[RMDB]
The record gives the reactivity of an RNA of 177 nucleotides to DMS and 2A3. DMS adducts were read by reverse transcription with MarathonRT. The data come from the RNA Mapping Database (RMDB), library OK2TRN. Conditions: 150 mM KOAc, 10 mM MgCl2 and 150 mM bicine (pH 8.5), 24 C.

RNA sequence: GGGAACGACUCGAGUAGAGUCGAAAAUAAGUGGUUUAAUAGAACAUUAUUACCUAAAGUCAUUGCUGACCGUGACAGCUUGGCGUUCCACUCGUUAAGACAUACGGUUGCCACUCAGCUAAAACAAUAUCCAGAUAUUGUUCGCAAUAUCUGGAUAAAAAGAAACAACAACAACAAC
Reactivity to DMS in 0.01 (KOAc 150mM, MgCl2 10mM, bicine 150mM(pH8.5), 24C), signal-to-noise 6, nucleotides 027 to 126: u000a060a050g010u000g010g020u000u000u000a100a100u000a100g000a080a120c070a070u000u000a030u010u000a130c030c010u000a060a060a110g010u000c090a260u010u000g010c030u000g010a050c120c140g030u000g000a080c130a080g000c000u000u000g000g010c030g010u000u010c060c090a070c130u000c070g010u000u010a030a050g010a040c140a080u000a060c070g020g000u000u000g010c020c020a020c050u000c020a040g010c030u010a050a070a070a070c150a050a120
Reactivity to 2A3 in 0.01 (KOAc 150mM, MgCl2 10mM, bicine 150mM(pH8.5), 24C), signal-to-noise 6, nucleotides 027 to 126: u090a040a000g280u030g060g060u090u110u120a120a130u150a120g100a130a030c030a080u080u130a060u070u070a150c010c010u050a090a090a020g060u080c050a100u040u230g010c020u030g010a050c030c020g020u020g040a020c020a020g020c000u010u030g010g000c010g020u210u090c050c020a050c040u030c010g020u030u030a030a010g020a030c030a030u180a040c010g020g000u000u030g030c000c000a020c020u020c010a010g010c020u050a080a050a020a030c050a040a080
High 2A3 reactivity points to a flexible backbone, as in loops and unpaired stretches.